[RMDB]
RNA sequence: GGGAACGACUCGAGUAGAGUCGAAAAGAGUGCGUGCUGGGGUACUCGGCGAAAUACGUUCGGCAACAGAGCAAUUGGCGGUGUCUCUAGGUUCCGAACUAUCGGUGGUCAACGACCCGAACCUCCGUGCGUUCUCGAAAUUCGUUUCGAGAACGCAAAAAGAAACAACAACAACAAC
Reactivity to 2A3 in 0.01 (KOAc 150mM, MgCl2 10mM, bicine 150mM(pH8.5), 24C), signal-to-noise 2, nucleotides 027 to 126: g070a000g010u060g000c020g050u020g000c030u000g000g000g000g020u020a030c010u020c010g030g020c020g080a000a080a000u190a060c130g000u000u000c000g000g010c020a010a030c010a020g020a020g000c030a050a200u050u050g040g000c120g090g010u050g080u080c000u000c000u030a120g000g180u050u040c000c000g000a000a000c020u020a050u050c020g030g020u070g030g110u050c060a060a050c170g040a050c000c010c010g000a040a030c000c000u000c000c000g000
Reactivity to DMS in 0.01 (KOAc 150mM, MgCl2 10mM, bicine 150mM(pH8.5), 24C), signal-to-noise 1, nucleotides 027 to 126: g080a050g000u030g050c010g000u000g100c080u000g000g010g000g000u010a030c100u010c100g000g000c150g000a060a050a060u010a040c180g000u000u000c000g000g000c050a060a020c050a050g000a060g000c030a040a080u010u000g070g050c070g050g010u010g000u040c000u000c000u000a050g000g000u020u000c010c000g030a000a000c070u000a050u020c060g000g020u060g010g000u000c090a060a080c070g000a160c250c000c030g000a020a080c000c000u020c010c000g040